[RMDB]
RNA sequence: GGGAACGACUCGAGUAGAGUCGAAAAUUGCUCGAGCGCGAGCGUGUGGGGCGCCAUGACAACUUUUUCGAUCUGGGCGGCCAUUCGCUGCUGACGGUGAGCCUGAUCGAGCGAAUGCGCCAGGCCACCGGGACGGAUGGUUCGCCAUCCGUCCCGGAAAAGAAACAACAACAACAAC
Reactivity to DMS in 0.01 (KOAc 150mM, MgCl2 10mM, bicine 150mM(pH8.5), 24C), signal-to-noise 1, nucleotides 027 to 126: u000u010g020c000u000c010g010a130g040c140g000c060g000a100g000c040g060u010g000u010g020g000g000g010c030g000c090c050a090u040g010a050c120a100a110c170u000u000u000u020u010c050g000a060u010c040u000g040g010g020c000g040g040c000c020a010u000u010c000g030c040u010g040c050u000g010a160c060g010g030u030g000a040g040c000c000u000g010a150u010c050g020a090g010c030g000a040a070u010g030c050g000c050c010a010g000g030c010c000a110
Reactivity to 2A3 in 0.01 (KOAc 150mM, MgCl2 10mM, bicine 150mM(pH8.5), 24C), signal-to-noise 1, nucleotides 027 to 126: u030u050g060c010u000c030g080a070g020c160g010c030g080a010g030c040g000u020g030u010g010g010g010g060c010g000c010c010a080u150g080a060c010a060a130c100u020u100u020u150u160c100g080a130u010c040u030g030g000g070c000g020g000c000c000a010u050u050c020g080c080u130g030c100u130g070a070c030g020g000u070g110a030g190c040c000u100g020a140u040c020g020a030g000c010g050a100a010u130g010c100g000c000c010a030g050g020c010c000a040